[RMDB]
RNA sequence: GGGAACGACUCGAGUAGAGUCGAAAAGACAUUGACCUAUGGGAAAUGCUUAAUCUCGCGUCAAAACGAGGAAUUCGCGAUGAGGUUGAGACUGUUAUUUCCGGACACGAGCGACGCGGAGCCCGAGCAGCUGACCGAUUAAUACAUGCAGAUGAUGCUGGCUCGACUGAUUCGUCAGUCGAGCCAGAAAAGAAACAACAACAACAAC
Reactivity to 2A3 in 0.01 (KOAc 150mM, MgCl2 10mM, bicine 150mM(pH8.5), 24C), signal-to-noise 1, nucleotides 027 to 156: g120a010c030a030u030u110g080a130c030c000u110a270u130g000g020g070a000a000a030u010g000c010u000u030a000a000u130c030u000c050g010c030g020u030c070a050a100a050a060c150g000a190g060g190a170a150u240u000c010g020c020g120a160u150g030a010g050g020u160u260g030a030g000a020c030u040g150u150u270a240u010u000u000c040c000g030g000a000c030a000c050g030a040g000c040g050a020c000g010c000g000g000a000g000c020c000c100g020a000g000c000a000g010c090u030g080a120c090c040g160a090u220u070a090a060u050a050c030a040u070g060c070a010g050a090u070g000a040u200g110

Structure probing data (2A3) for a 207-nucleotide construct. For 2A3, 352 sequencing reads were counted. Reactivities are given for positions 27 through 156. Conditions: 150 mM KOAc, 10 mM MgCl2 and 150 mM bicine (pH 8.5), 24 C.